[RMDB]
RNA sequence: GGGAACGACUCGAGUAGAGUCGAAAACAGUGAGCCGAGAUCAUGUCACUGCACUCCAGCCUGGGCAAGACAGAGUGCGACUCCAUCUCAGAAAAAAAAAAACCAACAUGCAUAUAACUAAAACAGAAGUUUCAUCAAAUACAUCUUGGUGCAUGUACUGCAUAAAUCGUUUCGACGAUUUAUGCAGAAAAGAAACAACAACAACAAC
Reactivity to 2A3 in 0.01 (KOAc 150mM, MgCl2 10mM, bicine 150mM(pH8.5), 24C), signal-to-noise 2, nucleotides 027 to 156: c070a030g090u030g070a030g060c030c050g060a030g040a070u030c040a050u160g020u070c020a040c100u080g020c000a000c030u040c030c010a040g040c000c000u110g050g030g050c020a070a090g060a020c040a040g020a000g010u010g000c020g000a000c000u000c020c040a080u040c040u020c020a000g230a010a000a000a030a000a000a000a000a000a000a000c070c030a020a020c010a030u020g000c060a020u140a010u020a090a120c060u110a080a130a060a030c080a030g080a190a020g060u060u110u120c070a070u110c020a070a080a060u150a100c030a060u030c060u090u110g060g010u000g000c000a000u010g030u000a060